[RMDB]
Structure probing data (2A3 and DMS) for a 177-nucleotide construct. Conditions: 150 mM KOAc, 10 mM MgCl2 and 150 mM bicine (pH 8.5), 24 C. For DMS the reverse transcriptase was MarathonRT.
RNA sequence: GGGAACGACUCGAGUAGAGUCGAAAAACGCCGUCUACGGACGGCGAUAGAGAGGCAGGACUUAGCUGGCUCUGUGAACAGGUCUUGUGUGUCAAUGUUCACAGUGGCUAAGUUCCACCCCACUGAAUGAUACAUAAUCAUUCGUGAUUAUGUAUCAAAAAGAAACAACAACAACAAC
Reactivity to 2A3 in 0.01 (KOAc 150mM, MgCl2 10mM, bicine 150mM(pH8.5), 24C), signal-to-noise 9, nucleotides 027 to 126: a000c010g000c010c000g000u000c010u020a060c260g110g000a000c000g000g000c000g000a000u020a000g120a000g020a060g020g020c130a070g030g010a000c000u000u000a000g000c000u020g100g040c050u010c010u080g000u000g000a000a010c010a020g040g050u070c070u240u300g140u090g050u040g030u130c060a160a300u040g000u010u000c000a000c000a010g010u040g020g000c000u000a000a000g000u030u000c000c000a010c000c010c000c000a060c040u070g060a100a100
Reactivity to DMS in 0.01 (KOAc 150mM, MgCl2 10mM, bicine 150mM(pH8.5), 24C), signal-to-noise 9, nucleotides 027 to 126: a130c020g010c000c000g010u000c000u000a130c190g030g010a010c000g010g010c000g010a010u010a020g010a110g010a080g000g010c140a140g000g000a070c010u000u000a010g010c000u010g020g020c170u020c010u000g010u000g000a010a000c000a030g000g000u010c050u010u030g020u020g020u020g010u000c040a090a110u000g010u000u000c000a010c000a000g010u010g000g000c000u000a000a010g000u000u000c000c010a180c030c010c010c020a140c060u010g000a140a140